Description
The data come from the RNA Mapping Database (RMDB), library OK1LIB. Chemical mapping of a 177-nucleotide RNA with DMS and 2A3. Reactivities are given for positions 27 through 126. For DMS, 1,130 sequencing reads were counted.

[RMDB]
RNA sequence: GGGAACGACUCGAGUAGAGUCGAAAAUUAAAGAUCCAAUAUCUCAGUGAUGGCCUGAAUCGGAAAAGCUGCUCAAUUGCAACAGUCCCUGAUGGAUGCGCAAUGUACUGUUAUGUCUCAACUCAACUACGAUCUUCCCAUUCGUGGGAAGAUCGUAAAAAGAAACAACAACAACAAC
Reactivity to DMS in 0.01 (KOAc 150mM, MgCl2 10mM, bicine 150mM(pH8.5), 24C), signal-to-noise 1, nucleotides 027 to 126: u020u110a080a090a240g000a080u020c000c010a090a150u000a110u000c020u000c150a040g000u000g000a020u000g000g000c020c000u020g000a010a020u000c110g030g000a020a060a000a060g000c000u000g060c030u000c150a040a180u000u080g010c080a110a110c120a210g000u000c000c040c040u000g010a050u000g000g000a110u000g020c100g000c030a050a090u000g000u000a100c130u000g000u000u000a060u020g010u030c050u000c010a000a030c110u000c150a040a030c200
Reactivity to 2A3 in 0.01 (KOAc 150mM, MgCl2 10mM, bicine 150mM(pH8.5), 24C), signal-to-noise 1, nucleotides 027 to 126: u100u090a000a170a260g130a190u220c000c040a090a060u290a000u030c020u000c080a040g100u000g130a000u080g050g120c000c020u080g100a000a000u050c000g000g000a000a000a000a000g020c000u030g000c060u110c030a030a210u090u150g070c030a000a000c000a060g240u090c020c000c030u160g050a100u260g000g000a000u030g120c110g000c010a060a060u000g110u220a080c000u060g110u170u000a050u140g240u000c000u050c050a030a020c030u010c140a090a040c030